[RMDB]
RNA sequence: GGGAACGACUCGAGUAGAGUCGAAAAUUGCGCUUCGGCGCAAAAUUGUGUGGAGGUAAGGAACUACGUCGUGUUCUCUCUUUCGGUAAAUCCUUUCCUCUCACUGUGGAGGGCUCGUUCGCGAGCCACGCUUCUGUACUUUCGAGUACAGAAGCGUAAAAGAAACAACAACAACAAC
Reactivity to DMS in 0.01 (KOAc 150mM, MgCl2 10mM, bicine 150mM(pH8.5), 24C), signal-to-noise 2, nucleotides 027 to 126: u000u000g000c010g010c010u000u020c200g020g040c010g010c000a020a000a030a070u010u000g000u000g030u010g010g000a000g000g000u000a010a000g000g010a040a140c230u000a050c000g050u000c090g020u010g010u000u010c120u000c090u000c080u010u000u000c070g020g000u010a030a060a180u000c000c000u020u000u010c000c000u000c000u000c010a000c010u000g010u000g010g000a110g020g010g000c000u010c000g040u010u000c180g020c010g000a020g020c000c020